[RMDB]
RNA sequence: GGGAACGACUCGAGUAGAGUCGAAAAGAGCCGCAGAGGCCAAGGUCUGAAUCGUAUCUUCGCGGGUUAACUAGGGGAGGCCAUUGGAGGCCUCGGCAGCUGCUUCAGGACCCUGGGAAGGUGGGAGUAAACCUGUUACGUUCGCGUAACAGGUUUAAAAAGAAACAACAACAACAAC
Reactivity to DMS in 0.01 (KOAc 150mM, MgCl2 10mM, bicine 150mM(pH8.5), 24C), signal-to-noise 3, nucleotides 027 to 126: g010a140g020c000c060g000c070a080g000a110g010g010c020c050a100a070g010g000u010c030u010g000a090a070u010c120g010u010a060u010c050u000u010c090g020c060g010g010g000u010u000a080a140c090u010a130g040g010g020g020a040g020g010c030c030a150u010u000g000g010a170g000g010c010c010u000c020g010g000c030a050g000c050u000g010c030u000u000c080a080g030g000a100c070c000c010u010g000g000g000a050a040g000g010u000g010g010g010a090g000
Structure probing data (DMS) for a 177-nucleotide construct.
For DMS the reverse transcriptase was MarathonRT.
Reactivities are given for positions 27 through 126.
It was measured as part of the RMDB library OK2TRN.